[RMDB]
RNA sequence: GGGAACGACUCGAGUAGAGUCGAAAAGAACUCUGUCCACGCUUCCUCCAGGUCGAUCUCCUCGGGGUCGAUGUCGCGAUCGUCCAGGUCGGCCUGUUCCUCGAGCUGGCGUUCGCGCUUGCGACGGCUGGUACUCCGGAUUCGUCCGGAGUACCAGAAAAGAAACAACAACAACAAC
Reactivity to DMS in 0.01 (KOAc 150mM, MgCl2 10mM, bicine 150mM(pH8.5), 24C), signal-to-noise 1, nucleotides 027 to 126: g000a100a110c060u010c040u000g020u000c030c030a090c050g020c080u020u000c020c000u000c030c050a090g010g020u000c030g010a050u020c050u020c040c030u010c070g030g010g020g000u000c000g010a050u010g000u020c040g010c030g020a000u000c000g010u010c010c020a020g010g010u000c010g000g000c200c070u000g010u010u000c020c030u000c000g010a090g000c010u010g010g000c020g000u000u000c030g000c000g020c050u000u000g010c030g010a050c050g010g010
Reactivity to 2A3 in 0.01 (KOAc 150mM, MgCl2 10mM, bicine 150mM(pH8.5), 24C), signal-to-noise 1, nucleotides 027 to 126: g020a050a040c010u000c030u090g030u060c040c000a040c000g010c050u070u050c000c020u000c010c040a010g020g030u020c010g020a060u000c060u000c060c030u020c040g100g030g010g040u010c040g010a050u070g090u120c020g040c010g000a000u010c010g190u150c010c000a010g120g090u020c000g010g080c000c000u050g000u020u020c000c020u030c010g040a050g070c010u010g030g010c020g010u040u000c030g000c010g000c020u050u090g050c030g040a030c000g100g000